[RMDB]
Structure probing data (2A3 and DMS) for a 177-nucleotide construct.
The reactions ran in a buffer of 150 mM KOAc, 10 mM MgCl2 and 150 mM bicine (pH 8.5), at 24 C.
It was measured as part of the RMDB library TTRDEL.
For DMS, 8,413 sequencing reads were counted.
For DMS the reverse transcriptase was MarathonRT.
RNA sequence: GGGAACGACUCGAGUAGAGUCGAAAAGAUAUGGAAUGUGAUGACCACCCACUAUCUCGGAAACGAGCCGAGGUGCGGUGCAAGCAUUCCUAAGUCAAAGAAUACAUCGCUUCGGCGAUGUAUUCAAUCAUGUAGGUAGGUUCGCCUACCUACAUGAAAAAGAAACAACAACAACAAC
Reactivity to 2A3 in 0.01 (KOAc 150mM, MgCl2 10mM, bicine 150mM(pH8.5), 24C), signal-to-noise 7, nucleotides 027 to 126: g030a010u090a050u170g010g010a000a000u000g030u050g080a300u140g030a060c070c010a010c010c080c000a020c020u170a210u180c020u010c010g020g040a200a300a250c130g080a160g110c040c020g090a060g030g020u010g010c250g000g020u020g020c010a170a110g000c000a000u000u010c000c000u010a100a010g040u020c060a180a040a050g010a000a010u000a000c000a010u000c000g000c020u080u120c300g110g000c000g000a000u000g000u000a000u000u000c000a000a000
Reactivity to DMS in 0.01 (KOAc 150mM, MgCl2 10mM, bicine 150mM(pH8.5), 24C), signal-to-noise 8, nucleotides 027 to 126: g010a040u010a300u010g000g000a010a000u000g020u000g000a140u010g010a150c300c000a010c000c010c000a030c040u010a120u010c010u000c000g010g000a070a090a130c190g010a090g020c230c090g010a040g000g020u010g000c250g020g000u000g000c030a040a220g010c000a020u000u000c000c000u000a030a090g010u000c050a090a080a130g000a010a000u000a000c000a000u000c000g010c000u000u010c200g030g010c000g010a000u000g000u000a000u000u000c000a050a100